[RMDB]
The record gives the reactivity of an RNA of 170 nucleotides to 2A3 and DMS. The reactions ran in a buffer of 150 mM KOAc, 10 mM MgCl2 and 150 mM bicine (pH 8.5), at 24 C.

RNA sequence: GGGAACGACUCGAGUAGAGUCGAAAAUCAAGUUUCUUGAUCUUCUUGUUGGAUCGCCGGAGAUCCUUCUCGAGCAGUCGCCUUUUCUUCCUUUCUUCUACCCACUGUUCGAGGAUCUCCUCCCUCUCGACCGGAGGGUUCGCCCUCCGGAAAAGAAACAACAACAACAAC
Reactivity to 2A3 in 0.01 (KOAc 150mM, MgCl2 10mM, bicine 150mM(pH8.5), 24C), signal-to-noise 4, nucleotides 027 to 129: u110c020a020a010g060u010u060u060c030u030u070g020a030u020c000u050u030c010u030u070g070u020u100g020g010a020u020c060g060c150c070g010g010a020g000a000u000c020c000u060u070c040u010c030g020a000g000c010a000g010u040c060g080c020c010u020u070u050u060c050u030u060c030c000u060u120u040c040u070u000c020u050a120c020c010c010a000c010u010g000u000u020c020g010a000g000g000a000u000c000u000c000c000u000c000c000c020u010c000u060c060g060a060
Reactivity to DMS in 0.01 (KOAc 150mM, MgCl2 10mM, bicine 150mM(pH8.5), 24C), signal-to-noise 4, nucleotides 027 to 129: u040c130a100a130g050u010u060u050c040u000u040g000a000u010c040u040u020c050u000u000g040u100u040g070g020a130u020c110g070c150c150g000g000a000g020a030u020c020c100u070u060c050u020c050g000a050g040c000a000g030u020c120g020c110c070u000u040u000u040c010u050u060c000c050u020u030u050c050u000u060c100u010a200c000c000c000a100c050u040g000u040u000c030g060a030g040g020a000u020c060u030c000c010u020c090c030c020u050c020u010c060g050a300
For DMS, 9,889 sequencing reads were counted.